[RMDB]
RNA sequence: GGGAACGACUCGAGUAGAGUCGAAAAGUGAGGAGGUCGAGGCCGGGCCUGAGACCGGUGUAUAAGCGCCUCCCUCAGCCUGCGCUUAUACUCAGGGAUACUCAGGCUAUCCCUGUGAUGGCUGAGACUUGAGCUCUGAAUUCGUUCAGGGUUCAAGAAAAGAAACAACAACAACAAC
Reactivity to DMS in 0.01 (KOAc 150mM, MgCl2 10mM, bicine 150mM(pH8.5), 24C), signal-to-noise 9, nucleotides 027 to 126: g010u010g010a100g010g010a080g010g010u000c030g010a190g000g010c020c020g010g000g000c010c010u000g000a040g000a170c010c010g000g010u000g010u000a030u000a040a040g000c030g010c000c110u000c060c050c020u000c040a040g010c040c030u000g010c040g000c030u000u000a030u000a040c020u000c030a040g010g000g000a080u000a040c010u000c040a030g000g000c090u000a020u000c000c000c010u000g010u000g000a090u000g010g010c010u000g000a180g000a250
Reactivity to 2A3 in 0.01 (KOAc 150mM, MgCl2 10mM, bicine 150mM(pH8.5), 24C), signal-to-noise 5, nucleotides 027 to 126: g100u060g040a070g020g040a020g010g030u080c030g020a030g080g020c010c010g010g010g000c000c000u000g010a010g000a030c000c010g010g000u010g000u010a090u010a020a020g010c010g000c010c010u040c020c010c000u020c010a020g020c000c020u020g000c020g000c010u060u040a030u030a070c020u020c030a020g040g000g020a020u040a080c010u010c020a010g020g000c010u010a010u000c000c000c000u010g010u000g000a040u020g010g000c000u010g010a000g010a030

An RNA of 177 nucleotides, treated with DMS and 2A3 and read out base by base. 2A3 is a SHAPE reagent: it acylates the 2'-hydroxyl of flexible nucleotides of all four kinds. The RNA was probed in 150 mM KOAc, 10 mM MgCl2 and 150 mM bicine (pH 8.5) at 24 C. Source: RMDB library OK2TRN, as collected in RNAgym.